Chemical mapping of a 207-nucleotide RNA with 2A3. The 2A3 profile rests on 550 reads. Conditions: 150 mM KOAc, 10 mM MgCl2 and 150 mM bicine (pH 8.5), 24 C. Source: RMDB library M2RFPK, as collected in RNAgym. 2A3 adducts were read by reverse transcription with SuperScript II with manganese.
RNA sequence: GGGAACGACUCGAGUAGAGUCGAAAAAAAUCGCAUAGCAAAGAGUCAAAAAAAUAGAGAGCUUUGCGAGACCUACCAUGGGUGAAGAGAUACCAUCCAAGGAGCUGAAGAGAAAUCUCACUUUAGAAACGGAAGCGGUGCUUCGGCACCGCUUCAAGUACUUACUUGUGUUCGCACAAGUAAGUACAAAAGAAACAACAACAACAAC
Reactivity to 2A3 in 0.01 (KOAc 150mM, MgCl2 10mM, bicine 150mM(pH8.5), 24C), signal-to-noise 1, nucleotides 027 to 156: a010a000a000u040c020g000c000a050u100a040g010c060a060a020a170g070a120g100u100c130a170a240a050a050a010a160a120u300a030g100a000g030a020g030c000u010u010u030g000c000g000a020g020a000c000c000u010a020c000c030a030u050g000g000g000u040g000a060a010g030a000g010a060u010a040c000c010a010u000c030c000a020a070g050g030a030g030c100u080g100a070a050g070a000g050a080a100a070u030c030u030c000a060c020u140u230u110a130g050a100a180a020c050g060g020a000a000g000c000g020g000u000g000c000u060u040c110g030g000c000a000c010c000g020c000u000u000c000a010a000